[RMDB]
RNA sequence: GGGAACGACUCGAGUAGAGUCGAAAAGAUAUGGACGUAUGUAUACGACGCCAUUGUUGAGGAUACUUCUCGGAAACGAGAAGAUCCAAUGAUGCAAUGGCGUCGUAUACUCUAUACGUCCUAAGUCCGUUGAGUAACGGUUCGCCGUUACUCAACGAAAAGAAACAACAACAACAAC
Reactivity to DMS in 0.01 (KOAc 150mM, MgCl2 10mM, bicine 150mM(pH8.5), 24C), signal-to-noise 1, nucleotides 027 to 126: g030a110u000a300u010g010g010a020c000g030u000a000u010g000u000a010u000a000c030g000a000c010g000c000c000a040u000u000g000u000u010g000a110g000g010a000u000a130c020u000u000c000u000c000g000g030a090a220a300c000g000a000g000a020a000g010a040u000c000c010a210a100u040g010a150u010g030c000a000a050u000g000g000c000g020u000c010g000u000a000u000a000c030u010c300u030a060u000a000c020g000u000c000c000u000a000a100g000u010c040

Notes:
Source: RMDB library TTRINS, as collected in RNAgym. Chemical mapping of a 177-nucleotide RNA with DMS. For DMS the reverse transcriptase was MarathonRT. The RNA was probed in 150 mM KOAc, 10 mM MgCl2 and 150 mM bicine (pH 8.5) at 24 C. For DMS, 1,381 sequencing reads were counted.